Conditions: 150 mM KOAc, 10 mM MgCl2 and 150 mM bicine (pH 8.5), 24 C. Chemical mapping of a 177-nucleotide RNA with 2A3 and DMS.
[RMDB]
RNA sequence: GGGAACGACUCGAGUAGAGUCGAAAAGCAGUAUAGUGCUACUUGUGUGAGAAUACUUUUAGUACAAGCGAGUACACGCAGUAUACUGCCACUUGUGUGAGAAUACUUUUAGUACAAGCGAGUACACUGGAUGUAUCUAUUUCGAUAGAUACAUCCAAAAAGAAACAACAACAACAAC
Reactivity to 2A3 in 0.01 (KOAc 150mM, MgCl2 10mM, bicine 150mM(pH8.5), 24C), signal-to-noise 9, nucleotides 027 to 126: g000c010a000g010u020a010u020a030g160u030g020c020u000a000c010u030u020g020u010g020u080g160a170g090a150a070u080a070c020u080u120u130u260a070g010u040a010c020a030a050g000c020g020a000g020u020a020c090a020c130g000c000a000g050u010a010u000a010c000u000g010c010c000a040c010u070u070g030u010g020u030g110a060g080a140a100u110a150c000u050u060u040u120a040g010u030a010c020a070a040g110c090g100a030g030u020a010c030a010c040
Reactivity to DMS in 0.01 (KOAc 150mM, MgCl2 10mM, bicine 150mM(pH8.5), 24C), signal-to-noise 6, nucleotides 027 to 126: g020c030a000g020u000a010u000a040g000u010g020c040u000a020c020u000u010g010u020g010u020g000a140g010a130a140u020a020c030u000u020u030u020a040g000u000a010c040a080a280g010c010g010a090g000u030a060c300a070c200g000c060a040g000u000a010u000a010c000u000g000c010c060a060c080u000u000g000u010g010u010g010a070g030a110a090u020a040c060u000u010u020u010a120g000u000a010c030a080a190g000c180g010a150g030u010a030c070a110c300
Source information: For DMS, 12,473 sequencing reads were counted. Source: RMDB library OK1LIB, as collected in RNAgym. 2A3 adducts were read by reverse transcription with SuperScript II with manganese.